[RMDB]
RNA sequence: GGGAACGACUCGAGUAGAGUCGAAAAGAAACGUGCGGGCUUUCAUGUGCGCUACCUGAUAAUUGGGUAUAUCUUUGGCCUGUUGUCUGCUUGCCUUCAGCGUGUGGGUGCCUGUGCGUCAGAAAACGCGGGGUAGCACUUUCGGGUGCUACCCCGCAAAAGAAACAACAACAACAAC
Reactivity to 2A3 in 0.01 (KOAc 150mM, MgCl2 10mM, bicine 150mM(pH8.5), 24C), signal-to-noise 1, nucleotides 027 to 126: g010a000a190a000c030g000u020g030c010g070g010g070c000u000u090u060c000a000u040g060u160g070c000g000c010u030a080c000c070u090g040a140u160a290a190u180u180g020g000g220u170a050u050a130u120c060u200u000u120g030g030c020c060u000g070u090u080g040u050c060u030g110c070u090u000g010c000c000u190u150c050a000g000c000g020u040g000u000g000g000g000u000g000c000c000u000g000u000g020c040g000u000c000a000g080a000a060a000a000c020